[RMDB]
RNA sequence: GGGAACGACUCGAGUAGAGUCGAAAAUGUAUUCGGGGGUGCGUGGGGAAACUUGGAGAAAUGUGGAUUUGUUAUUAAACUAUUUUUUUAAUAACCUCCAAAACUCCCGGGACCUUAUUGGGCGGAACGAUCGUAUGGAGUUCGCUCCGUAUGGUCGAAAAGAAACAACAACAACAAC
Reactivity to DMS in 0.01 (KOAc 150mM, MgCl2 10mM, bicine 150mM(pH8.5), 24C), signal-to-noise 6, nucleotides 027 to 126: u030g000u010a100u030u020c030g000g000g010g000g010u000g010c250g010u030g000g010g000g000a040a040a080c140u000u010g000g010a020g000a050a050a070u020g010u010g010g000a090u010u040u030g000u010u010a020u010u010a010a010a040c110u030a000u000u000u010u020u000u000u010a000a000u000a010a030c010c210u000c000c000a050a040a110a130c040u000c000c010c070g000g000g000a060c030c040u010u000a060u010u000g000g000g000c060g000g000a070a120
Reactivity to 2A3 in 0.01 (KOAc 150mM, MgCl2 10mM, bicine 150mM(pH8.5), 24C), signal-to-noise 7, nucleotides 027 to 126: u110g010u020a110u030u110c020g020g000g000g000g000u040g030c030g030u110g010g010g000g000a040a100a050c020u020u030g030g010a000g030a020a200a080u170g030u100g050g030a060u070u090u180g010u020u020a040u010u050a040a010a010c010u020a140u090u050u010u000u000u000u000a000a000u000a000a000c000c000u000c000c000a010a020a000a020c000u000c000c010c000g000g000g000a000c000c000u040u060a110u100u100g000g010g000c010g010g000a040a010